[RMDB]
RNA sequence: GGGAACGACUCGAGUAGAGUCGAAAAGCGAAUGGGACCCACACCUCUCCCUUGCUUCCCAAAGAGAAGCAAGAGGAAAAGUGGCUCUCCCUUAGCCAUCCGAGUGGACGUAUGUCCUCCUUCGGAUCUCUCCAUCUGUGUUCGCACAGAUGGAGAGAAAAGAAACAACAACAACAAC
Reactivity to 2A3 in 0.01 (KOAc 150mM, MgCl2 10mM, bicine 150mM(pH8.5), 24C), signal-to-noise 1, nucleotides 027 to 126: g030c010g010a040a020u070g030g000g020a000c020c000c020a000c030a020c000c040u090c020u030c030c000c000u010u000g020c010u020u030c040c000c040a120a150a030g070a000g010a010a010g000c000a010a010g060a300g000g000a000a010a030a070g000u000g010g000c000u000c000u020c000c000c000u050u000a000g040c000c000a030u000c000c030g000a020g030u010g010g020a010c030g230u300a160u300g010u100c010c030u010c030c050u090u030c020g040g000a080u020
Chemical mapping of a 177-nucleotide RNA with 2A3. For 2A3 the reverse transcriptase was SuperScript II with manganese. The reactions ran in a buffer of 150 mM KOAc, 10 mM MgCl2 and 150 mM bicine (pH 8.5), at 24 C. The 2A3 profile rests on 1,309 reads.